[RMDB]
RNA sequence: GGGAACGACUCGAGUAGAGUCGAAAAGCUCUGAGAGACAGAUCGAACAACAAAGAGAGAUCUAAAAUCUUAGGGGAGAGAACGAAUCUGUCGUCUUCUCUAGGACAUUGUCGAUCAGAUGUCCAAAGACCAUACAUUGGUUCGCCAAUGUAUGGUCAAAAGAAACAACAACAACAAC
Reactivity to 2A3 in 0.01 (KOAc 150mM, MgCl2 10mM, bicine 150mM(pH8.5), 24C), signal-to-noise 6, nucleotides 027 to 126: g010c010u000c000u010g020a010g010a000g000a010c010a010g000a000u010c010g030a070a040c030a040a010c030a040a300a010g090a010g010a000g000a010u000c000u000a020a040a000a080u000c000u000u000a000g000g000g020g000a000g000a010g020a060a010c040g030a100a110u150c120u170g120u060c020g140u010c000u000u000c000u000c000u010a000g010g000a000c020a120u070u160g000u000c000g000a010u000c010a010g000a020u040g020u000c010c000a040a040a020
Reactivity to DMS in 0.01 (KOAc 150mM, MgCl2 10mM, bicine 150mM(pH8.5), 24C), signal-to-noise 3, nucleotides 027 to 126: g010c070u000c010u000g000a000g010a300g000a000c030a020g020a000u020c000g000a300a260c060a040a110c190a070a130a070g000a000g000a300g020a010u000c020u000a020a170a090a300u000c020u000u000a000g010g000g000g000a000g000a070g000a120a040c020g000a110a080u050c130u060g040u000c020g000u030c000u020u000c010u000c010u020a020g000g030a000c130a070u020u000g000u010c000g030a160u010c010a030g020a020u010g010u020c060c000a090a090a050
The record gives the reactivity of an RNA of 177 nucleotides to 2A3 and DMS.
It was measured as part of the RMDB library OK1LIB.
Values are in units of 0.01, from 0 to 300, in steps of 10.
DMS (dimethyl sulfate) methylates the pairing face of unpaired adenines and cytosines.
DMS adducts were read by reverse transcription with MarathonRT.